[RMDB]
RNA sequence: GGGAACGACUCGAGUAGAGUCGAAAAUGUCUACAAAGUGUCAGAGCAGAGCAAUCUGCGAUGGCGUGCCUUUUGUUUAAUGAGUCUGCGAGUCAGUGUUUGUGGCAAGACUAAGGGCUUCCGGCCCCCUAAAAGGGAGGUUCGCCUCCCUUUUAGGAAAAGAAACAACAACAACAAC
Reactivity to 2A3 in 0.01 (KOAc 150mM, MgCl2 10mM, bicine 150mM(pH8.5), 24C), signal-to-noise 1, nucleotides 027 to 126: u040g060u000c030u050a150c040a000a080a020g090u070g000u040c000a010g010a000g000c020a020g000a000g010c000a040a100u040c000u000g000c030g010a010u000g000g010c000g000u020g010c010c010u150u060u050u080g120u040u130u080a070a050u190g010a000g110u040c040u040g040c090g060a010g040u090c070a050g050u080g110u200u180u200g240u100g020g050c030a090a040g010a010c000u020a030a090g060g000g000c160u080u030c090c050g050g030c010c010c000
Reactivity to DMS in 0.01 (KOAc 150mM, MgCl2 10mM, bicine 150mM(pH8.5), 24C), signal-to-noise 5, nucleotides 027 to 126: u010g000u000c050u000a050c090a040a060a060g020u010g010u010c000a020g010a300g010c000a010g010a010g010c300a080a130u000c010u000g030c000g000a120u000g010g000c000g020u010g020c150c030u000u000u000u000g000u000u000u000a070a080u000g000a070g010u000c020u000g010c050g020a130g010u000c010a070g010u000g000u010u000u000g000u000g010g030c030a070a070g010a040c050u010a070a100g010g010g000c040u000u010c110c090g010g010c000c010c030
Chemical mapping of a 177-nucleotide RNA with 2A3 and DMS. The reactions ran in a buffer of 150 mM KOAc, 10 mM MgCl2 and 150 mM bicine (pH 8.5), at 24 C. DMS adducts were read by reverse transcription with MarathonRT. For 2A3 the reverse transcriptase was SuperScript II with manganese. The 2A3 profile rests on 819 reads.